RNA sequence: GGGAACGACUCGAGUAGAGUCGAAAAAGGAUUUAUGUAAGAUGCUGAUAAUGAGUAAGGAACCUUAAAGUUAAUCGUUCCCUGUCUCUCCGCAGAACCUACUGGACAAAACAGGACAGUAAGUGGACAAACUAAGUACGUUCGCGUACUUAGUUUGAAAAGAAACAACAACAACAAC
Reactivity to DMS in 0.01 (KOAc 150mM, MgCl2 10mM, bicine 150mM(pH8.5), 24C), signal-to-noise 3, nucleotides 027 to 126: a050g010g010a080u000u000u000a010u020g020u000a060a060g000a050u010g000c040u010g020a100u020a110a080u000g010a090g030u030a090a130g010g020a060a050c040c020u000u010a030a090a170g000u010u000a060a070u000c040g010u010u000c000c000c000u010g000u000c020u000c060u000c040c030g030c070a060g010a090a060c050c040u000a060c010u010g000g000a110c060a070a080a080a110c220a100g000g000a100c120a020g000u000a030a040g020u010g000g010a230
Reactivity to 2A3 in 0.01 (KOAc 150mM, MgCl2 10mM, bicine 150mM(pH8.5), 24C), signal-to-noise 2, nucleotides 027 to 126: a010g070g000a030u070u100u080a090u140g050u060a050a060g040a100u070g030c010u000g010a020u060a240a090u150g030a050g030u040a000a060g060g060a050a020c020c010u090u050a120a150a040g040u120u140a060a070u070c030g020u010u000c010c000c000u000g050u000c010u000c000u000c000c020g000c020a020g020a070a010c010c000u000a020c010u030g000g010a010c030a020a130a050a020c060a040g020g030a000c000a010g000u040a080a010g030u040g070g000a020